[RMDB]
RNA sequence: GGGAACGACUCGAGUAGAGUCGAAAAGGAGGAGGUCUGCCCAAUUUCCCUUAUAUCCUUACCACGGCAGACUUCGAAGGGCUUGAGAAAGGGAAAUUGGUGGUAAGGAUAUGUCUCAAGCCUUAGACUACAGGAAUGUAUUCGUACAUUCCUGUAGAAAAGAAACAACAACAACAAC
Reactivity to 2A3 in 0.01 (KOAc 150mM, MgCl2 10mM, bicine 150mM(pH8.5), 24C), signal-to-noise 4, nucleotides 027 to 126: g060g020a030g030g030a020g000g030u000c000u010g000c000c000c000a010a020u030u020u010c020c000c000u030u100a300u020a020u090c000c000u010u000a000c000c010a020c020g000g000c010a010g010a020c000u020u010c020g020a040a060g030g000g000c000u010u000g000a010g020a050a060a030g090g010g040a020a050a030u080u070g080g000u020g000g000u010a000a010g000g000a000u030a080u090g050u000c000u000c000a010a000g000c000c000u010u020a030g020a020
Reactivity to DMS in 0.01 (KOAc 150mM, MgCl2 10mM, bicine 150mM(pH8.5), 24C), signal-to-noise 7, nucleotides 027 to 126: g010g000a150g000g010a070g000g000u000c000u000g000c000c010c160a080a280u000u000u000c000c000c000u000u010a120u010a090u000c000c000u000u000a020c000c000a080c060g010g010c020a010g010a040c030u000u000c050g000a110a100g000g010g020c000u000u000g010a010g000a050a110a040g000g010g000a020a040a040u010u000g020g030u000g010g000u010a010a010g000g010a040u000a030u010g000u000c010u000c010a010a010g010c000c000u000u000a060g000a280

Chemical mapping of a 177-nucleotide RNA with 2A3 and DMS. It was measured as part of the RMDB library OK2TRN. 2A3 adducts were read by reverse transcription with SuperScript II with manganese. For DMS the reverse transcriptase was MarathonRT.